[RMDB]
RNA sequence: GGGAACGACUCGAGUAGAGUCGAAAAUAUCGAUGCUGAAGCCCGCUGGUCUGAUGUAGUAAUCCACAACAACACGCUCUACUACACUGGUGUACCGGAAAACCUCGACGCCGAUGCCUUUGAGCAAGUAAUCCUAGUCAUUCGUGACUAGGAUUACAAAAGAAACAACAACAACAAC
Reactivity to DMS in 0.01 (KOAc 150mM, MgCl2 10mM, bicine 150mM(pH8.5), 24C), signal-to-noise 4, nucleotides 027 to 126: u000a060u010c030g010a080u000g020c050u010g020a140a110g010c030c010c050g040c090u000g010g000u000c060u010g010a090u000g000u000a050g010u000a080a070u000c050c020a060c090a060a060c130a070a070c120a070c120g000c040u000c070u000a040c020u000a030c060a060c070u000g000g010u000g010u000a040c040c020g010g000a050a060a090a110c040c020u000c030g010a100c090g000c020c010g010a060u010g010c020c020u000u000u000g000a100g020c090a070a120
Reactivity to 2A3 in 0.01 (KOAc 150mM, MgCl2 10mM, bicine 150mM(pH8.5), 24C), signal-to-noise 3, nucleotides 027 to 126: u200a040u050c010g030a030u070g030c040u070g040a050a030g030c020c030c000g010c050u080g010g030u040c050u050g040a070u050g060u010a040g050u020a050a040u040c020c020a040c020a160a040c010a030a000c040a030c090g020c020u040c020u050a010c020u030a010c010a010c030u020g040g040u070g030u040a090c040c040g020g020a060a080a030a060c030c020u040c020g030a020c050g040c030c000g020a030u070g000c010c000u080u130u150g050a070g020c020a090a010

Structure probing data (DMS and 2A3) for a 177-nucleotide construct. The 2A3 profile rests on 3,890 reads. Reactivities are given for positions 27 through 126.